An RNA of 177 nucleotides, treated with 2A3 and DMS and read out base by base. Values cover nucleotides 27 to 126. For DMS the reverse transcriptase was MarathonRT. The RNA was probed in 150 mM KOAc, 10 mM MgCl2 and 150 mM bicine (pH 8.5) at 24 C.
RNA sequence: GGGAACGACUCGAGUAGAGUCGAAAACGCUGGAUCGCACCACGAGACUCCCGAACAGGGGUCGAACGAACGUAGGCCGCGCUGACGAGCAGGAUGAGCAAGACGCGGUAGCUCGCGCGAGCGGAUGCACUCCAUUUUAUUUCGAUAAAAUGGAGUGAAAAGAAACAACAACAACAAC
Reactivity to 2A3 in 0.01 (KOAc 150mM, MgCl2 10mM, bicine 150mM(pH8.5), 24C), signal-to-noise 9, nucleotides 027 to 126: c030g010c030u050g040g040a090u060c020g000c040a040c030c010a030c030g040a040g010a040c060u090c090c020c010g020a100a080c120a100g000g000g010g010u010c010g010a070a020c040g020a070a010c040g030u060a050g100g000c010c010g000c000g000c030u060g040a130c050g030a020g030c030a030g070g150a140u160g050a050g040c040a070a040g090a070c040g000c000g020g030u040a030g020c010u010c040g020c010g010c020g020a020g020c020g020g010a020u120g010
Reactivity to DMS in 0.01 (KOAc 150mM, MgCl2 10mM, bicine 150mM(pH8.5), 24C), signal-to-noise 9, nucleotides 027 to 126: c070g010c060u000g010g010a080u000c050g010c050a120c040c030a080c060g000a240g010a040c020u010c000c000c020g010a130a110c210a140g000g000g000g010u000c010g000a070a130c100g010a070a080c090g010u000a090g010g000c010c010g010c030g010c040u000g010a130c070g000a120g010c040a100g010g000a120u010g000a130g010c050a080a100g000a130c050g010c020g000g010u000a070g010c040u000c030g010c050g000c070g000a110g020c030g010g010a110u010g010